Source information:
Chemical mapping of a 207-nucleotide RNA with DMS and 2A3. The RNA was probed in 150 mM KOAc, 10 mM MgCl2 and 150 mM bicine (pH 8.5) at 24 C. 2A3 is a SHAPE reagent: it acylates the 2'-hydroxyl of flexible nucleotides of all four kinds. DMS (dimethyl sulfate) methylates the pairing face of unpaired adenines and cytosines. It was measured as part of the RMDB library OK3TST. 2A3 adducts were read by reverse transcription with SuperScript II with manganese.
RNA sequence: GGGAACGACUCGAGUAGAGUCGAAAACUUUCGGCUUCUCCCGCCGCUUUCAGCCAUUUCUCACGCGAGAUAAUAACGUCUGCGAAUACAAGGUCAUCCCGACCGAAUACAUGCUUCAAGGCCCAUCUGACACGCGACCAGAAAGACGAUUGGCGUGGAAUUUAUAAGCUUUCGAGCUUAUAAAUUCAAAAGAAACAACAACAACAAC
Reactivity to DMS in 0.01 (KOAc 150mM, MgCl2 10mM, bicine 150mM(pH8.5), 24C), signal-to-noise 2, nucleotides 027 to 156: c100u000u010u010c020g030g000c010u010u000c020u010c040c000c040g030c000c020g020c070u000u000u010c020a130g010c050c010a130u000u000u000c020u010c000a120c130g040c060g060a090g030a170u000a090a120u000a080a060c090g010u000c010u010g000c050g000a130a090u000a070c060a080a180g010g030u000c020a080u000c070c020c000g010a070c000c010g010a120a100u010a060c060a090u000g010c040u000u000c070a080a130g020g030c030c020c040a100u000c020u000g010a250c020a050c040g020c030g000a050c020c010a120g010a100a070a110g000a090c040g000a210u000u000g010g020c020g020u020g030
Reactivity to 2A3 in 0.01 (KOAc 150mM, MgCl2 10mM, bicine 150mM(pH8.5), 24C), signal-to-noise 4, nucleotides 027 to 156: c020u070u120u120c020g010g010c030u090u010c010u030c020c040c000g040c020c010g030c070u050u140u070c040a030g010c030c010a070u030u060u060c040u030c020a080c060g080c060g060a030g010a040u100a190a090u090a130a060c040g010u000c030u040g030c020g030a070a010u070a100c080a090a080g010g000u010c000a040u070c020c020c000g010a010c000c000g010a030a010u080a050c040a040u110g020c020u040u090c040a080a050g060g020c010c030c000a040u050c020u050g030a000c000a010c100g010c010g040a070c000c010a010g080a110a110a010g050a020c020g040a040u040u090g030g000c020g020u020g040